[RMDB]
Chemical mapping of a 177-nucleotide RNA with 2A3 and DMS. For 2A3 the reverse transcriptase was SuperScript II with manganese. The reactions ran in a buffer of 150 mM KOAc, 10 mM MgCl2 and 150 mM bicine (pH 8.5), at 24 C. The DMS profile rests on 1,741 reads.
RNA sequence: GGGAACGACUCGAGUAGAGUCGAAAAGUGGCCGAUGGAAAGUACCAUGCCGUGGAGCUUCUGGCCAUCAAGAAGAAUUUCACGCUGCGCGUGGAUCGCGGAUUGGCCCGUUCCAUCAUCAACGAGGGCCUCAAGCACAAUUCGUUGUGCUUGAGGCAAAAGAAACAACAACAACAAC
Reactivity to 2A3 in 0.01 (KOAc 150mM, MgCl2 10mM, bicine 150mM(pH8.5), 24C), signal-to-noise 2, nucleotides 027 to 126: g090u090g020g030c060c050g030a000u010g010g100a190a060a020g010u050a080c000c000a030u070g050c000c010g000u030g010g060a080g040c010u000u020c000u020g060g040c020c020a100u190c050a030a030g020a000a000g010a070a150u050u040u050c010a010c000g020c140u300g030c100g030c020g060u000g000g010a020u080c060g000c030g000g040a040u050u050g000g000c000c010c010g000u040u010c030c000a060u080c000a020u020c010a070a090c060g030a110g100g110
Reactivity to DMS in 0.01 (KOAc 150mM, MgCl2 10mM, bicine 150mM(pH8.5), 24C), signal-to-noise 2, nucleotides 027 to 126: g030u010g000g030c040c100g010a000u000g020g000a130a140a130g040u000a130c050c000a030u010g010c020c010g020u000g000g010a150g020c000u000u000c020u000g020g030c070c080a050u000c110a090a020g020a000a020g000a080a060u000u000u020c010a010c010g020c210u000g000c270g000c010g080u000g000g000a060u000c030g010c030g000g010a190u000u000g030g020c040c100c020g000u010u010c020c000a050u000c070a100u000c120a030a100c100g010a090g010g000